[RMDB]
RNA sequence: GGGAACGACUCGAGUAGAGUCGAAAACGAAGCUCGGCAUCGGUCAGCGGCUUAGUAGGCGUGUCCUUGGUUUGCAAAAGUCUGGAUAGCACGUCGGUUCGGGCGGUGAGAUCGGAAUCGAUACGGCUGAGCGGCACAAGUUCGCUUGUGCCGCUCAAAAAGAAACAACAACAACAAC
Reactivity to 2A3 in 0.01 (KOAc 150mM, MgCl2 10mM, bicine 150mM(pH8.5), 24C), signal-to-noise 1, nucleotides 027 to 126: c030g040a090a000g020c000u000c000g040g040c000a020u000c020g040g000u020c000a000g010c000g000g000c060u010u090a120g000u010a000g000g000c000g010u120g300u300c000c000u040u260g170g000u000u000u190g000c030a000a000a000a200g000u000c070u050g000g000a070u050a000g000c000a000c080g020u000c000g010g000u060u070c000g020g020g040c000g100g000u090g060a130g030a030u040c060g020g000a060a000u160c100g090a120u090a220c010g000g010c030
Annotation:
Conditions: 150 mM KOAc, 10 mM MgCl2 and 150 mM bicine (pH 8.5), 24 C. The record gives the reactivity of an RNA of 177 nucleotides to 2A3.